[RMDB]
RNA sequence: GGGAACGACUCGAGUAGAGUCGAAAAUAUUUUGAUUAUGUCUCGACUAGGACAUUUAGUGUCUCAACCCUAUUUAGGGUUGAACGGUACACUCGUCCAGCUAUAUGGUUCAAAUCCUUCUGGGCAAAACCUUACCGCAUACUUAAAUAGUAUAGUGGCGUAUAACGUGAUUCGUCACGUUAUACGCAAAAGAAACAACAACAACAAC
Reactivity to DMS in 0.01 (KOAc 150mM, MgCl2 10mM, bicine 150mM(pH8.5), 24C), signal-to-noise 1, nucleotides 027 to 156: u000a030u030u010u030u000g000a110u000u010a030u010g030u000c050u000c050g000a100c090u000a090g020g000a010c030a070u010u000u000a000g000u000g000u000c060u010c000a010a000c010c000c020u000a300u000u010u000a030g020g020g050u000u000g000a010a060c110g050g020u010a070c050a050c030u010c130g010u000c000c020a070g000c110u000a050u000a070u000g000g010u000u000c050a070a110a130u000c050c000u000u010c030u010g010g020g050c010a020a040a090a280c050c050u000u000a050c000c010g060c010a040u010a000c020u020u000a020a150a080u000a010g000u000a010u000a050g030u010g020
Reactivity to 2A3 in 0.01 (KOAc 150mM, MgCl2 10mM, bicine 150mM(pH8.5), 24C), signal-to-noise 4, nucleotides 027 to 156: u180a070u050u220u100u150g020a060u020u160a020u100g060u020c060u040c130g130a130c110u140a110g030g000a000c000a000u060u070u140a040g000u010g030u030c010u010c030a000a000c000c010c010u080a150u170u220u300a020g000g000g000u000u000g010a010a000c000g020g010u070a020c010a020c050u050c050g010u000c000c000a000g000c050u110a050u030a030u300g040g000u090u170c080a070a050a090u080c020c000u040u010c010u010g000g000g000c000a010a010a060a100c020c000u040u110a070c040c020g010c030a000u000a010c010u030u090a080a180a100u090a170g030u020a030u030a080g050u090g050